RNA sequence: GGGAACGACUCGAGUAGAGUCGAAAAGAUGAGGUUAAGAACUAGAGAGAACUCGAGACGCGUGAUGACGCUCAAGAGAAAACGCGAGAGUGAGCAAGUGUGCUAGACGAAGCACACAAGAGGAAGACAUGACUGAUGCCUUCGGGCAUCAGUCAUGAAAAGAAACAACAACAACAAC
Reactivity to 2A3 in 0.01 (KOAc 150mM, MgCl2 10mM, bicine 150mM(pH8.5), 24C), signal-to-noise 1, nucleotides 027 to 126: g020a000u090g010a000g260g000u070u120a000a090g000a120a070c020u080a050g000a000g000a000g000a090a020c000u000c080g060a050g050a060c080g000c000g050u000g140a300u300g090a040c020g000c080u030c000a000a090g050a000g000a060a050a000a000c030g080c000g000a000g000a000g120u060g000a060g000c000a010a000g080u000g000u000g000c010u000a000g060a060c170g070a070a000g020c000a000c000a000c000a010a000g030a080g140g050a020a000g090a000
Reactivity to DMS in 0.01 (KOAc 150mM, MgCl2 10mM, bicine 150mM(pH8.5), 24C), signal-to-noise 2, nucleotides 027 to 126: g020a050u010g010a050g110g010u000u000a020a100g000a070a110c030u020a110g000a160g000a040g020a210a060c000u010c030g000a300g010a030c110g070c050g040u000g000a150u030g000a080c100g010c010u000c040a040a080g040a080g000a060a020a120a070c210g000c280g000a050g000a140g000u010g010a120g000c180a070a110g000u000g000u020g000c000u030a080g010a150c200g000a070a030g000c010a020c000a000c000a100a030g000a020g090g040a090a030g040a120